[RMDB]
RNA sequence: GGGAACGACUCGAGUAGAGUCGAAAAUUAUCUAUAUGUCAAGAACUCGAUUGCAAAGCACUGACAUCUUUUCAAUGUAAAAGCAAUUUUAAUGGAUUUUCAUUCUAUUUCAGGUGAAGUUCUGAGGUCGCGAAAUAUUAUUCGUAAUAUUUCGCGAAAAAGAAACAACAACAACAAC
Reactivity to DMS in 0.01 (KOAc 150mM, MgCl2 10mM, bicine 150mM(pH8.5), 24C), signal-to-noise 2, nucleotides 027 to 126: u000u000a090u010c060u010a100u000a140u010g000u000c070a100a080g000a070a110c070u000c120g010a060u000u010g000c040a070a120a300g000c040a050c070u000g000a050c300a120u010c100u010u000u000u000c010a030a050u010g010u000a040a020a090a160g000c070a020a010u000u000u010u010a070a090u010g000g000a040u000u000u010u000c000a030u000u000c000u000a050u030u000u000c130a050g000g000u000g020a070a150g010u000u000c000u000g000a050g020g000
Reactivity to 2A3 in 0.01 (KOAc 150mM, MgCl2 10mM, bicine 150mM(pH8.5), 24C), signal-to-noise 1, nucleotides 027 to 126: u030u020a000u070c040u020a140u000a130u300g080u110c020a040a100g000a060a020c000u000c090g000a030u000u050g040c020a060a070a110g000c000a030c030u000g000a000c080a100u090c030u080u250u060u030c060a120a110u070g030u140a010a150a000a000g000c000a020a000u160u050u140u280a130a040u080g030g030a020u120u000u000u040c000a010u090u090c000u040a090u050u300u060c020a030g090g000u040g090a170a030g030u050u010c000u020g110a030g160g040